[RMDB]
RNA sequence: GGGAACGACUCGAGUAGAGUCGAAAAAAUAUUACAGCCCCGACGAUUUAGUCACGCCACAGGAAUUCGCUGAUCCGCAGUUCGCGGCGAUCAACCAGAAGCGUUUCGAUCUGUACAUCGACCUGCGAAUAUAUUUACAUUUCGAUGUAAAUAUAUUAAAAGAAACAACAACAACAAC
Reactivity to DMS in 0.01 (KOAc 150mM, MgCl2 10mM, bicine 150mM(pH8.5), 24C), signal-to-noise 5, nucleotides 027 to 126: a090a040u020a060u000u000a150c080a140g000c060c020c030c050g000a080c070g010a100u000u000u010a080g020u010c050a060c070g000c020c070a040c120a090g000g000a080a070u010u000c050g020c030u000g000a080u010c060c040g020c050a080g010u010u000c080g030c070g010g010c040g000a050u000c090a090a100c120c030a080g010a090a110g000c050g020u000u010u010c040g000a070u000c010u000g020u000a080c170a090u000c030g010a070c070c020u010g010c060g000
Reactivity to 2A3 in 0.01 (KOAc 150mM, MgCl2 10mM, bicine 150mM(pH8.5), 24C), signal-to-noise 1, nucleotides 027 to 126: a000a000u230a070u080u090a070c060a060g090c040c010c040c010g040a020c020g010a010u100u130u190a050g020u040c010a000c060g000c010c030a090c030a080g000g090a030a040u090u070c080g000c050u030g050a040u010c010c060g000c030a010g080u090u090c060g000c020g000g000c010g010a030u010c010a020a040c010c010a060g000a180a050g130c000g000u000u060u100c030g000a020u000c040u040g040u020a060c040a080u040c040g050a120c010c000u040g020c010g010